[RMDB]
RNA sequence: GGGAACGACUCGAGUAGAGUCGAAAAUAUUGUCGGUGUCUGGCAUCUGACAAGGGGCGAUGAUAUCUGCCAUAACGGUGAAGCAGAAGUACUGUCUGGGCCGUUACAGCCACCAGUUUAAAUGACAUCAUCUGAGCCAUUUCGAUGGCUCAGAUGAAAAAGAAACAACAACAACAAC
Reactivity to DMS in 0.01 (KOAc 150mM, MgCl2 10mM, bicine 150mM(pH8.5), 24C), signal-to-noise 1, nucleotides 027 to 126: u030a000u010u000g000u040c030g030g000u000g010u000c020u000g000g000c040a110u000c010u000g010a190c070a000a040g040g090g050g020c000g010a090u010g000a020u040a180u000c120u030g000c020c080a300u000a010a110c040g000g010u000g010a300a030g000c000a000g000a180a300g000u000a100c030u010g000u080c010u000g000g010g000c000c010g000u000u000a070c160a070g000c020c040a010c090c000a080g010u000u030u040a040a130a120u080g000a070c080a160
Reactivity to 2A3 in 0.01 (KOAc 150mM, MgCl2 10mM, bicine 150mM(pH8.5), 24C), signal-to-noise 2, nucleotides 027 to 126: u170a030u030u080g060u060c070g020g020u000g070u130c050u050g060g000c020a030u070c080u070g000a040c010a050a080g050g030g000g020c060g000a000u070g020a030u130a080u240c030u090g000c010c020a060u010a060a000c000g090g000u030g020a000a030g040c000a000g050a190a010g080u110a130c010u080g070u160c000u010g020g070g040c020c040g020u020u000a020c000a010g000c010c010a000c010c000a000g030u000u100u120a140a200a080u170g060a040c010a000